[RMDB]
RNA sequence: GGGAACGACUCGAGUAGAGUCGAAAAGGCGUGAUCAGUGUGGGCGCUUGGGGCAAGUUCCUUGGAAGAGGACAGCAUGGAGGGUGAUACUCCCGUUCAUCCCUGAGUUGCUCGUGCGUACGAUCCGUCACCAUAGAUCAUUCGUGAUCUAUGGUGAAAAAGAAACAACAACAACAAC
Reactivity to DMS in 0.01 (KOAc 150mM, MgCl2 10mM, bicine 150mM(pH8.5), 24C), signal-to-noise 9, nucleotides 027 to 126: g010g010c010g010u020g010a010u010c000a200g010u000g020u010g010g010g000c000g010c010u010u010g010g000g010g010c300a040a060g000u030u000c000c000u000u000g010g090a300a100g000a020g000g000a020c020a060g030c120a200u010g020g010a110g000g000g000u000g010a100u030a080c090u010c000c000c010g000u010u000c040a170u010c000c000c000u000g000a020g000u000u020g030c000u000c000g030u000g010c020g010u010a060c260g000a010u000c000c010g000
Reactivity to 2A3 in 0.01 (KOAc 150mM, MgCl2 10mM, bicine 150mM(pH8.5), 24C), signal-to-noise 9, nucleotides 027 to 126: g060g010c040g110u260g020a010u010c020a040g020u000g000u020g040g010g000c000g000c000u000u000g010g000g000g010c040a050a060g050u160u040c000c000u010u010g060g030a060a040g010a010g020g010a000c010a010g030c030a060u160g020g010a010g010g010g010u020g030a050u070a110c030u030c010c010c000g060u050u040c020a120u160c000c000c000u010g010a020g010u070u300g170c000u000c000g000u000g000c000g030u050a040c050g000a000u010c010c010g010

Annotation: This 177-nucleotide RNA was probed chemically with DMS and 2A3. The RNA was probed in 150 mM KOAc, 10 mM MgCl2 and 150 mM bicine (pH 8.5) at 24 C.